[RMDB]
RNA sequence: GGGAACGACUCGAGUAGAGUCGAAAAUCAGCGAACAGAAGAGUCUCUCACGCGGUAGGAGCAAGCCCAUAGCGAUAGGGGGAGAUGCUGGGAGUUAGAGGAGACCUUAGGGGAGACCGAAGCGAGGCACGCUCAACCUUCGGGUUGAGCAAAAGAAACAACAACAACAAC
Reactivity to DMS in 0.01 (KOAc 150mM, MgCl2 10mM, bicine 150mM(pH8.5), 24C), signal-to-noise 5, nucleotides 027 to 129: u030c000a060g010c070g020a040a050c080a050g010a110a070g020a070g060u020c040u020c030u020c040a170c080g010c060g010g030u040a040g000g000a040g040c150a070a120g050c120c000c020a060u050a120g030c040g050a100u050a040g020g040g000g050g010a080g000a040u040g030c130u050g000g000g000a100g050u030u050a050g000a050g060g010a090g000a000c000c040u000u050a130g040g000g050g000a070g020a040c040c070g000a040a050g020c220g050a000g010g030c250a100c190
Reactivity to 2A3 in 0.01 (KOAc 150mM, MgCl2 10mM, bicine 150mM(pH8.5), 24C), signal-to-noise 4, nucleotides 027 to 129: u090c000a010g040c010g050a020a020c010a040g040a080a010g010a040g070u030c010u010c000u010c020a080c030g030c030g050g010u040a030g020g060a030g020c060a000a030g020c000c030c000a090u120a040g050c040g070a090u150a120g000g000g000g040g000a030g010a010u080g050c030u040g000g030g000a040g000u100u090a020g010a010g050g010a020g010a010c010c000u030u070a030g000g030g000g000a030g000a000c000c010g000a020a000g040c030g010a010g010g000c070a030c090